[RMDB]
The record gives the reactivity of an RNA of 207 nucleotides to DMS and 2A3. It was measured as part of the RMDB library OK3TST. 2A3 adducts were read by reverse transcription with SuperScript II with manganese. As a SHAPE reagent, 2A3 marks flexible, mostly unpaired nucleotides at the ribose 2'-OH. Reactivities are given for positions 27 through 156. For DMS the reverse transcriptase was MarathonRT.

RNA sequence: GGGAACGACUCGAGUAGAGUCGAAAAAGAACCUCCGCCAAUGAUGAAUUGAACGAAAGCAUAAGCGCUUCCAGUGCUCUUGAUGUUAGCGAUCUUCAUCCAUGAUUCGGAGCUGGAAGCAACCCCGCUUAACUUAUCAGGCGCUUGCACGCCAGCCCAUUACAGUGUAAUUCGUUACACUGUAAUGAAAAGAAACAACAACAACAAC
Reactivity to DMS in 0.01 (KOAc 150mM, MgCl2 10mM, bicine 150mM(pH8.5), 24C), signal-to-noise 4, nucleotides 027 to 156: a090g000a120a060c030c000u000c030c030g020c040c020a090a090u000g010a080u010g000a140a060u000u000g010a080a070c030g010a110a080a060g000c050a120u000a070a090g030c080g010c000u000u000c050c000a050g030u000g010c020u000c030u000u000g030a060u000g010u000u010a100g040c080g000a120u000c070u000u010c030a090u000c040c040a130u010g010a220u000u000c070g000g000a120g020c010u000g010g010a040a070g000c010a050a030c020c010c040c030g010c050u000u000a030a090c060u000u010a070u000c030a130g020g020c010g020c030u000u000g010c110a070c050g020c000c010a110g010c050c070
Reactivity to 2A3 in 0.01 (KOAc 150mM, MgCl2 10mM, bicine 150mM(pH8.5), 24C), signal-to-noise 9, nucleotides 027 to 156: a000g060a050a050c010c010u020c020c020g030c020c020a050a040u060g020a010u040g010a050a110u110u090g040a110a060c060g060a130a040a020g020c020a070u060a120a030g030c020g010c060u060u020c020c040a060g040u070g150c020u020c010u100u200g040a020u040g070u110u120a050g040c050g090a050u020c050u120u080c070a030u000c050c020a060u150g030a130u130u120c050g000g000a010g000c000u000g000g000a010a000g000c000a000a020c010c000c000c010g010c030u050u050a060a040c010u070u100a060u180c060a050g010g000c010g010c060u060u140g020c060a020c050g010c020c020a020g020c020c020